Notes
Structure probing data (DMS and 2A3) for a 177-nucleotide construct. Values cover nucleotides 27 to 126. The reactions ran in a buffer of 150 mM KOAc, 10 mM MgCl2 and 150 mM bicine (pH 8.5), at 24 C. The data come from the RNA Mapping Database (RMDB), library OK1LIB.
RNA sequence: GGGAACGACUCGAGUAGAGUCGAAAAACACAAUCACCCAGCAUAUGGUGGAAGUGCCAGUGAUCACAGCUGACGGGGAAGUGUACAUCAGAAAUGGCCAGAGAGGUAGUGGACAGCCAGACACAAGCAUCCUGUCCCAAUUCGUUGGGACAGGAUGAAAAGAAACAACAACAACAAC
Reactivity to DMS in 0.01 (KOAc 150mM, MgCl2 10mM, bicine 150mM(pH8.5), 24C), signal-to-noise 4, nucleotides 027 to 126: a100c100a100c130a080a060u030c100a140c040c000c020a160g020c090a140u020a070u000g020g030u020g010g020a060a120g020u000g000c040c010a040g020u010g000a070u050c060a080c070a050g000c070u020g010a070c070g000g000g010g020a060a050g000u010g000u000a040c120a080u010c090a070g020a080a100a040u050g010g010c000c100a110g000a060g010a040g000g010u020a010g030u000g000g020a030c100a070g000c040c040a040g010a110c080a060c110a050a100g000
Reactivity to 2A3 in 0.01 (KOAc 150mM, MgCl2 10mM, bicine 150mM(pH8.5), 24C), signal-to-noise 3, nucleotides 027 to 126: a000c070a000c030a060a080u120c030a070c040c010c000a000g050c000a120u200a070u150g080g000u050g000g040a120a040g020u080g070c000c020a000g010u030g060a090u110c070a020c000a100g020c030u050g050a050c060g030g030g030g000a020a090g050u020g030u110a030c020a070u070c030a010g070a040a120a020u080g020g000c010c040a010g020a000g010a030g060g010u100a000g010u060g000g000a000c030a000g020c030c010a000g040a030c010a000c020a050a010g020